[RMDB]
RNA sequence: GGGAACGACUCGAGUAGAGUCGAAAAUCAAGAUUAUGGCGCAAGACCUCCACGGCAUCGUGGCAAACGAUCUUUAAAUUGCCCAGCUCGUUCUGAUGAAUGCCAUGGAGCAGUUUGCCAACACCUGCCAAGCAGGUUAUUUCGAUAACCUGCUUGGAAAAGAAACAACAACAACAAC
Reactivity to DMS in 0.01 (KOAc 150mM, MgCl2 10mM, bicine 150mM(pH8.5), 24C), signal-to-noise 2, nucleotides 027 to 126: u000c090a070a070g010a140u030u010a110u000g000g000c010g010c160a100a080g000a090c190c000u000c010c000a020c060g010g010c020a020u000c010g000u020g010g000c120a010a030a100c130g020a080u000c120u000u000u010a040a100a110u010u000g000c040c020c040a090g020c130u010c050g010u000u000c050u000g010a110u000g000a090a030u000g000c000c000a050u000g010g000a030g020c090a090g020u000u000u000g040c010c010a090a100c150a120c070c040u000g000
Reactivity to 2A3 in 0.01 (KOAc 150mM, MgCl2 10mM, bicine 150mM(pH8.5), 24C), signal-to-noise 4, nucleotides 027 to 126: u070c020a040a020g040a100u190u160a100u300g070g000c040g010c060a060a040g040a150c010c000u000c010c000a010c010g010g000c010a010u030c020g050u040g040g010c010a010a000a050c060g070a080u050c010u050u300u110a120a250a200u090u050g000c000c000c000a020g020c050u080c070g100u300u010c030u070g100a090u130g030a160a060u010g000c010c020a010u020g000g010a010g010c020a020g010u040u100u110g000c010c000a040a000c020a060c030c020u040g000
The data come from the RNA Mapping Database (RMDB), library OK2TRN. Structure probing data (DMS and 2A3) for a 177-nucleotide construct. For 2A3 the reverse transcriptase was SuperScript II with manganese. Values cover nucleotides 27 to 126. The reactions ran in a buffer of 150 mM KOAc, 10 mM MgCl2 and 150 mM bicine (pH 8.5), at 24 C. 2A3 is a SHAPE reagent: it acylates the 2'-hydroxyl of flexible nucleotides of all four kinds. For 2A3, 4,354 sequencing reads were counted.